[RMDB]
RNA sequence: GGGAACGACUCGAGUAGAGUCGAAAAGUGCAGAUUGAAAUUCAUGGGAGCCUCUCCAUAAUGGAUGAACGCCGCGUUAGUCCGCGCAGUCGCGACGUAAACGCUCUGUAUUCCCGUUCAGGCCUCAGAUAAAUGCCUAUUUCGAUAGGCAUUUAUCAAAAGAAACAACAACAACAAC
Reactivity to DMS in 0.01 (KOAc 150mM, MgCl2 10mM, bicine 150mM(pH8.5), 24C), signal-to-noise 7, nucleotides 027 to 126: g010u000g010c010a010g000a080u000u000g020a110a130a050u000u000c030a030u000g000g010g010a090g020c140c080u010c060u000c010c010a090u000a100a050u000g010g000a030u010g010a100a070c100g010c070c050g010c010g010u000u010a160g010u010c050c070g000c070g020c150a140g010u020c020g020c040g010a020c030g010u010a060a080a100c070g010c060u000c010u010g010u000a170u000u000c020c000c010g010u010u010c130a090g010g000c060c090u000c110a140
Reactivity to 2A3 in 0.01 (KOAc 150mM, MgCl2 10mM, bicine 150mM(pH8.5), 24C), signal-to-noise 3, nucleotides 027 to 126: g070u040g010c010a000g050a070u080u120g040a180a130a040u060u060c030a030u050g000g020g020a040g060c050c050u130c000u000c040c000a080u270a300a060u130g010g030a010u010g020a090a030c030g070c110c010g000c020g010u010u050a040g020u000c090c040g000c010g000c050a030g140u290c030g030c060g000a010c010g020u040a000a160a000c010g000c010u000c000u010g000u020a030u020u030c020c000c020g000u100u070c040a020g010g080c010c010u090c040a000
The data come from the RNA Mapping Database (RMDB), library OK2TRN. An RNA of 177 nucleotides, treated with DMS and 2A3 and read out base by base. The RNA was probed in 150 mM KOAc, 10 mM MgCl2 and 150 mM bicine (pH 8.5) at 24 C. For 2A3 the reverse transcriptase was SuperScript II with manganese. Values cover nucleotides 27 to 126.